RNA sequence: GGGAACGACUCGAGUAGAGUCGAAAAGCCUGGCUUAUUGCUGUAACUCCGGAGGCACGAGUGUGAACAUGAGGGGGUGUAUUAGUUCGCGGGUUAGCCGCGCCUGUCUGCUGGACGUCUGAGUCGAUUGCGGGCUCUAGUGUAAGCUUGAGCUCGCCAGCGAUAUACUGUUCGCAGUAUAUCGCUGAAAAGAAACAACAACAACAAC
Reactivity to 2A3 in 0.01 (KOAc 150mM, MgCl2 10mM, bicine 150mM(pH8.5), 24C), signal-to-noise 2, nucleotides 027 to 156: g000c000c000u000g040g000c000u140u150a120u170u280g020c040u020g030u110a090a030c030u020c040c050g080g000a040g040g030c050a020c100g060a070g060u080g010u020g070a080a070c070a190u160g020a120g020g010g020g050g010u030g020u030a080u040u030a060g080u030u070c060g000c020g010g010g050u110u130a030g080c000c010g000c000g050c010c000u060g000u090c010u040g040c020u030g030g000a010c030g030u060c040u040g030a020g060u030c030g070a050u010u120g000c000g000g000g010c000u000c020u040a020g030u040g030u130a160a060g010c000u000u000g000a000g000c010u010c000g010c000
Reactivity to DMS in 0.01 (KOAc 150mM, MgCl2 10mM, bicine 150mM(pH8.5), 24C), signal-to-noise 2, nucleotides 027 to 156: g020c050c030u000g020g030c070u010u010a030u000u010g020c030u020g020u000a080a110c040u000c030c030g040g010a180g020g050c030a060c070g020a080g010u010g030u000g010a050a090c090a090u010g010a080g020g010g040g000g020u000g030u000a070u000u000a120g030u000u000c040g010c050g000g060g010u000u010a110g030c010c020g020c010g000c090c020u000g030u000c040u000g040c040u010g000g020a070c080g000u010c030u000g000a190g000u020c060g000a200u010u000g030c000g040g020g010c020u000c010u000a040g020u010g020u020a110a150g000c010u000u010g030a050g000c030u010c000g010c020